[RMDB]
Source: RMDB library RFM100, as collected in RNAgym.
Chemical mapping of a 177-nucleotide RNA with 2A3.
RNA sequence: GGGAACGACUCGAGUAGAGUCGAAAAUGUGUUUCAGCCAAUAGGGAACGCAGAUGCGAAAGCAGGGCCUAACGAACCACCUAGUUCCCUCUUUAUGAGGGCAGGUGAUAAGAGAGAAGUUACCCCAGCCUUCAGCCAAGUUCGCUUGGCUGAAGGCAAAAGAAACAACAACAACAAC
Reactivity to 2A3 in 0.01 (KOAc 150mM, MgCl2 10mM, bicine 150mM(pH8.5), 24C), signal-to-noise 1, nucleotides 027 to 126: u070g010u000g000u000u000u050c000a000g070c000c000a150a070u080a210g010g030g000a000a080c000g040c060a010g010a060u080g030c050g020a030a000a080g000c000a060g000g040g000c000c070u030a070a000c000g020a020a050c060c060a000c000c000u010a030g040u220u300c000c020c000u010c000u030u300u200a080u170g000a000g000g000g000c000a000g000g000u000g000a000u000a020a120g110a000g040a000g000a060a000g000u000u050a120c000c000c000c000a010